[RMDB]
RNA sequence: GGGAACGACUCGAGUAGAGUCGAAAAAAUGUGGAAGAUGGUCAGGAAUUUGGAUUAGAGGGCUUGGUGCCACUUAUCCUGGAUGAUCUGACUGAAUCAUGAUUCCAAUCCUCUACUUAUACUGACCCCUAUCGCGAAGGUUCGCCUUCGCGAUAGGAAAAGAAACAACAACAACAAC
Reactivity to 2A3 in 0.01 (KOAc 150mM, MgCl2 10mM, bicine 150mM(pH8.5), 24C), signal-to-noise 1, nucleotides 027 to 126: a000a000u190g030u090g010g000a010a000g010a010u140g000g000u010c010a000g030g060a020a070u090u260u070g040g010a020u000u000a000g050a240g070g000g000c010u140u090g240g000u180g010c000c000a000c020u000u070a000u050c010c020u010g120g030a010u020g000a050u040c000u000g010a010c020u010g050a000a010u090c030a020u130g090a170u060u000c010c000a020a040u000c000c000u040c000u000a030c010u090u000a040u030a290c000u000g110a030c010c020
Reactivity to DMS in 0.01 (KOAc 150mM, MgCl2 10mM, bicine 150mM(pH8.5), 24C), signal-to-noise 1, nucleotides 027 to 126: a030a050u020g030u000g010g000a020a050g010a160u010g000g020u000c010a020g000g030a110a050u000u030u000g000g010a000u000u000a010g060a230g000g000g050c080u010u020g010g010u000g020c000c000a060c030u000u000a050u010c010c070u000g000g000a040u000g000a150u000c000u000g020a050c060u010g000a090a060u010c210a050u000g000a200u010u000c040c070a050a040u010c070c000u000c040u000a030c100u040u000a080u010a080c080u020g000a220c070c030